An RNA of 177 nucleotides, treated with DMS and 2A3 and read out base by base.
Conditions: 150 mM KOAc, 10 mM MgCl2 and 150 mM bicine (pH 8.5), 24 C.
[RMDB]
RNA sequence: GGGAACGACUCGAGUAGAGUCGAAAAGAUAUGGAUACUUGGACCAAGCGCUAGAGCGAUAUCGGAAACGAUAUUCGCUCUUGGACCGCUUGCUAGUAUCCUAAGUCAAAACCAUGGUUCGCCAUGGCUCAUACACACUGUUCGCAGUGUGUAUGAGAAAAGAAACAACAACAACAAC
Reactivity to DMS in 0.01 (KOAc 150mM, MgCl2 10mM, bicine 150mM(pH8.5), 24C), signal-to-noise 7, nucleotides 027 to 126: g000a040u000a300u000g000g000a010u000a000c000u010u000g020g020a200c300c020a020a010g010c000g000c050u000a020g010a020g000c000g010a020u000a000u000c000g020g010a150a090a190c010g010a000u000a010u010u010c010g020c000u000c000u000u000g040g000a140c300c020g010c000u000u010g000c010u000a010g010u000a010u000c000c000u000a040a120g010u000c040a100a050a080a190c010c000a010u000g010g000u000u020c300g020c000c000a010u000g000g000
Reactivity to 2A3 in 0.01 (KOAc 150mM, MgCl2 10mM, bicine 150mM(pH8.5), 24C), signal-to-noise 4, nucleotides 027 to 126: g020a030u100a030u200g000g000a010u010a030c030u090u210g050g080a150c160c070a010a010g000c020g010c030u020a000g010a000g000c000g000a010u000a000u010c000g050g020a070a050a050c030g010a010u000a020u070u060c000g000c000u000c000u000u020g000g040a020c020c060g010c000u010u010g020c000u000a000g000u000a010u000c000c000u000a110a020g070u010c040a030a030a040a110c010c000a000u020g020g090u080u150c300g060c110c010a020u000g030g000